RNA sequence: GGGAACGACUCGAGUAGAGUCGAAAAUACGGGCCCAUACCGAGACGGAUGCAGCCCCUCUUCAGGAGGCCAUGCACCCUCUUACCAGUCCUGGAUAGGUGCUGUACCUAUUCCUAUAUGGGGGAACCAUCCUGGUCCAUUUCGAUGGACCAGGAUGAAAAGAAACAACAACAACAAC
Reactivity to 2A3 in 0.01 (KOAc 150mM, MgCl2 10mM, bicine 150mM(pH8.5), 24C), signal-to-noise 2, nucleotides 027 to 126: u200a010c020g000g040g020c010c010c000a010u040a050c020c040g030a030g030a060c040g030g050a060u040g010c000a090g020c000c030c000c000u020c000u070u050c030a020g040g070a050g030g030c050c030a040u100g000c010a050c030c000c000u020c040u030u040a080c030c020a080g070u020c030c000u020g020g000a000u020a030g090g000u020g030c090u090g060u040a000c000c000u000a030u060u050c020c020u070a070u000a030u180g000g030g000g000g010a020a000c010
Reactivity to DMS in 0.01 (KOAc 150mM, MgCl2 10mM, bicine 150mM(pH8.5), 24C), signal-to-noise 2, nucleotides 027 to 126: u010a080c060g000g000g000c020c010c010a020u000a190c040c020g000a100g010a100c280g040g000a090u000g000c020a010g010c060c100c000c000u000c070u000u010c120a060g000g000a100g000g010c160c080a040u000g020c040a090c010c020c010u000c070u000u010a110c090c060a140g010u000c020c020u000g000g000a010u010a010g000g000u000g010c080u000g020u010a020c020c010u000a100u010u000c010c010u010a130u000a030u000g000g010g000g010g000a080a050c070